RNA sequence: GGGAACGACUCGAGUAGAGUCGAAAACUAAUAAGAAGGGGAGGAGGAAGUGAUCCUGGACAGCCAGAUGAUAUGUGCACUAUUCCUUCAUAAUGGAGAUUCUGAAGAGGAGAAGCACUUCACUAAACACCAUCUCGAGAUUCGUCUCGAGAUGGUGAAAAGAAACAACAACAACAAC
Reactivity to DMS in 0.01 (KOAc 150mM, MgCl2 10mM, bicine 150mM(pH8.5), 24C), signal-to-noise 2, nucleotides 027 to 126: c080u010a020a140u010a060a160g020a080a090g000g030g010g010a070g010g000a070g000g010a100a080g010u010g000a110u000c050c040u000g030g000a100c170a090g020c080c080a040g010a090u000g000a040u010a030u000g050u000g010c010a040c080u010a130u000u000c020c020u000u000c010a020u000a010a030u010g050g000a110g000a070u010u000c080u000g000a000a030g010a080g010g000a020g000a100a020g010c000a040c000u000u000c080a080c150u000a060a050a100
Reactivity to 2A3 in 0.01 (KOAc 150mM, MgCl2 10mM, bicine 150mM(pH8.5), 24C), signal-to-noise 1, nucleotides 027 to 126: c020u030a040a200u090a300a000g110a040a040g010g030g000g000a020g030g010a010g000g000a000a070g030u070g050a070u000c010c020u010g010g020a040c020a020g140c050c010a040g000a050u090g040a010u070a070u300g030u000g030c000a010c110u020a020u020u090c000c000u000u000c030a030u040a050a010u040g030g060a160g020a130u100u000c010u110g040a070a030g040a100g100g010a040g020a020a000g050c030a000c080u020u020c050a050c010u120a050a210a000